This 177-nucleotide RNA was probed chemically with 2A3 and DMS.
Source: RMDB library OK2TST, as collected in RNAgym.
2A3 adducts were read by reverse transcription with SuperScript II with manganese.
The RNA was probed in 150 mM KOAc, 10 mM MgCl2 and 150 mM bicine (pH 8.5) at 24 C.
RNA sequence: GGGAACGACUCGAGUAGAGUCGAAAAUGCAGUGGUGUGAUCAUGGCUCACUGUAGCCUCGAACUCCGGGGCUCAAGCCAUCCUCCAGACUCAGCCUCCUGAUUAGCUGGGACUACAGGCGUGUGCCUCCUUAUACGACGUUCGCGUCGUAUAAGGAAAAAGAAACAACAACAACAAC
Reactivity to 2A3 in 0.01 (KOAc 150mM, MgCl2 10mM, bicine 150mM(pH8.5), 24C), signal-to-noise 4, nucleotides 027 to 126: u100g000c030a000g040u020g040g020u060g050u110g060a050u090c050a050u060g010g000c010u030c040a110c070u060g060u110a000g000c010c000u010c020g030a150a070c080u030c140c020g000g000g000g000c000u010c010a010a010g000c010c000a010u010c000c010u000c000c040a020g030a090c010u010c020a020g020c020c010u070c010c030u110g040a180u100u090a020g040c010u010g050g040g010a030c010u060a030c030a060g030g020c040g040u120g070u120g060c000c000
Reactivity to DMS in 0.01 (KOAc 150mM, MgCl2 10mM, bicine 150mM(pH8.5), 24C), signal-to-noise 6, nucleotides 027 to 126: u000g010c030a040g020u000g000g010u010g020u000g000a050u010c110a050u000g000g000c000u000c090a110c220u000g010u020a020g010c020c000u000c020g000a120a150c200u010c110c010g010g010g000g010c010u000c030a030a080g010c010c020a040u000c030c020u000c030c040a080g000a110c030u000c020a040g000c020c050u000c060c050u010g010a100u010u010a080g000c040u000g010g000g010a090c040u000a030c130a070g000g010c060g020u010g020u000g000c030c010